[RMDB]
RNA sequence: GGGAACGACUCGAGUAGAGUCGAAAAGUGAACCCCCUGGCUUUGGAUUUCCUCCCAGGUGUAGAAUCAAUCUCCAUGUCCUCUCGCCUGGGCCUCUUCGCCGGGGGUCCUCCCUCUUCGUCCUUCUGUGCCUCUUGGUUCGCCAAGAGGAAAAGAAACAACAACAACAAC
Reactivity to DMS in 0.01 (KOAc 150mM, MgCl2 10mM, bicine 150mM(pH8.5), 24C), signal-to-noise 8, nucleotides 027 to 129: g100u070g020a090a100c090c030c020c010c050u100g080g000c040u000u040u080g000g000a130u070u040u090c070c040u050c000c000c000a040g050g030u000g040u130a020g010a040a080u040c080a030a020u030c050u040c200c120a170u040g020u020c150c000u000c000u020c020g000c000c000u040g000g000g000c130c010u040c060u010u010c090g010c040c040g010g010g000g010g010u040c020c020u000c010c040c000u040c070u030u030c100g050u000c050c080u040u040c030u010g060u090g040
Reactivity to 2A3 in 0.01 (KOAc 150mM, MgCl2 10mM, bicine 150mM(pH8.5), 24C), signal-to-noise 9, nucleotides 027 to 129: g120u130g030a070a070c010c000c000c000c060u110g010g010c030u120u070u090g030g030a090u100u110u160c020c040u080c000c000c000a000g020g000u010g020u130a020g010a020a030u080c040a040a060u050c100u050c170c060a100u110g030u030c020c020u000c010u010c000g000c010c000u000g010g000g010c000c000u060c010u080u080c060g010c010c010g010g000g000g000g000u000c000c000u000c000c010c000u020c040u080u070c060g100u030c040c000u050u050c030u060g110u160g110